[RMDB]
RNA sequence: GGGAACGACUCGAGUAGAGUCGAAAAUAUCCGUGUCGGGGUAAACUACGGCUUCCGGAUUCCUGGAUAGAGCAUCUCAUAGGAAAGUACCGUUAGAAAGAUCAACUCGUAAUUGAUUGAGUAUAAAGUACACACAAUGGUUCGCCAUUGUGUGUACAAAAGAAACAACAACAACAAC
Reactivity to DMS in 0.01 (KOAc 150mM, MgCl2 10mM, bicine 150mM(pH8.5), 24C), signal-to-noise 4, nucleotides 027 to 126: u030a030u000c010c020g030u010g010u010c020g030g000g020g050u030a070a080a130c060u030a060c070g010g000c020u020u020c280c000g010g000a060u000u000c030c020u010g000g000a070u020a040g020a070g010c060a070u010c010u000c070a100u040a080g010g000a040a070a100g000u010a080c030c050g010u010u010a010g010a100a180a240g010a020u000c000a010a000c040u010c300g010u040a130a200u000u000g000a010u000u000g000a080g040u000a050u000a020a040a110
Reactivity to 2A3 in 0.01 (KOAc 150mM, MgCl2 10mM, bicine 150mM(pH8.5), 24C), signal-to-noise 6, nucleotides 027 to 126: u140a000u000c010c000g010u010g010u040c030g000g000g010g070u110a100a160a130c040u150a110c030g000g000c000u120u050c080c010g000g030a030u020u000c000c000u010g000g030a070u080a090g100a010g040c040a040u030c030u010c080a080u130a070g040g050a130a040a030g050u080a060c020c030g010u020u010a040g030a040a010a000g020a010u010c010a010a020c030u040c140g110u140a100a060u020u020g010a010u000u010g000a000g020u010a010u010a060a030a010